[RMDB]
RNA sequence: GGGAACGACUCGAGUAGAGUCGAAAAAAAAAAGAUAUGGAUCGAUACGAGCUGAUGACCCACACCCAAGUAUAUCGGAAACGAUAUAUGUAAGUGUGGCAAGGCUCGUCGAUCCUAAGUCAAAAAACUAUAUAACUUAGUUCGCUAAGUUAUAUAGAAAAGAAACAACAACAACAAC
Reactivity to 2A3 in 0.01 (KOAc 150mM, MgCl2 10mM, bicine 150mM(pH8.5), 24C), signal-to-noise 2, nucleotides 027 to 126: a010a010a010a000a010a060g070a020u100a050u090g010g010a000u000c000g010a010u060a300c030g000a010g000c000u030g010a300u100g040a250c000c000c000a000c010a010c000c000c000a000a010g000u000a000u000a000u000c010g020g040a040a050a040c010g000a000u000a000u000a000u020g040u070a020a030g000u010g000u010g010g010c010a060a090g010g010c000u010c000g000u000c000g010a000u000c000c000u000a090a010g040u030c000a050a000a090a140a110a050
Reactivity to DMS in 0.01 (KOAc 150mM, MgCl2 10mM, bicine 150mM(pH8.5), 24C), signal-to-noise 4, nucleotides 027 to 126: a000a020a060a050a070a090g010a040u000a300u010g000g010a000u000c000g000a100u020a030c040g010a020g040c000u000g000a060u030g010a130c300c000c010a010c000a010c000c010c020a100a300g000u000a010u010a000u000c000g010g000a140a060a180c010g010a010u000a000u010a000u000g000u010a300a230g010u000g010u010g000g000c010a050a050g010g020c010u000c000g000u000c000g010a000u000c000c000u000a010a040g020u030c010a020a060a070a050a050a150
Conditions: 150 mM KOAc, 10 mM MgCl2 and 150 mM bicine (pH 8.5), 24 C. Chemical mapping of a 177-nucleotide RNA with 2A3 and DMS. 2A3 adducts were read by reverse transcription with SuperScript II with manganese. It was measured as part of the RMDB library TTRDES. The 2A3 profile rests on 6,819 reads.